[RMDB]
RNA sequence: GGGAACGACUCGAGUAGAGUCGAAAACAGGAAUGGAGAUUAACAAGUGGGAAGGACAAGCUGAGGCACUAGACAAACAGAUCCAAGUGCAUCCUCACUUGCACUUGGGCCAGCAAUUUUUAAGCUCCUCAAAAACGCUAUUCGUAGCGUUUUUGAGAAAAGAAACAACAACAACAAC
Reactivity to 2A3 in 0.01 (KOAc 150mM, MgCl2 10mM, bicine 150mM(pH8.5), 24C), signal-to-noise 1, nucleotides 027 to 126: c050a020g000g140a010a050u110g050g010a050g000a040u100u140a150a040c060a140a110g060u100g060g020g030a090a000g030g000a000c040a080a050g000c030u040g030a010g010g000c040a000c060u080a030g030a050c030a040a140a000c030a030g030a060u060c000c020a000a000g000u000g000c000a020u050c000c080u160c010a050c060u020u010g000c000a010c000u000u000g000g000g040c000c000a000g050c020a050a170u020u000u000u020u090a060a050g000c010u020c040
Reactivity to DMS in 0.01 (KOAc 150mM, MgCl2 10mM, bicine 150mM(pH8.5), 24C), signal-to-noise 2, nucleotides 027 to 126: c110a080g000g020a100a100u000g000g010a060g010a120u010u010a070a060c140a030a110g040u010g000g010g000a100a050g020g000a090c090a040a070g000c110u000g000a050g000g000c040a040c080u000a050g020a100c120a070a060a060c210a050g030a040u000c010c000a010a030g000u000g030c000a030u000c140c150u020c130a100c100u000u000g000c020a020c000u000u000g000g000g000c030c040a040g020c110a090a020u000u000u010u010u000a040a100g000c020u010c060

An RNA of 177 nucleotides, treated with 2A3 and DMS and read out base by base. For 2A3, 1,297 sequencing reads were counted. DMS adducts were read by reverse transcription with MarathonRT. The DMS profile rests on 1,508 reads. 2A3 adducts were read by reverse transcription with SuperScript II with manganese. Source: RMDB library OK2TRN, as collected in RNAgym.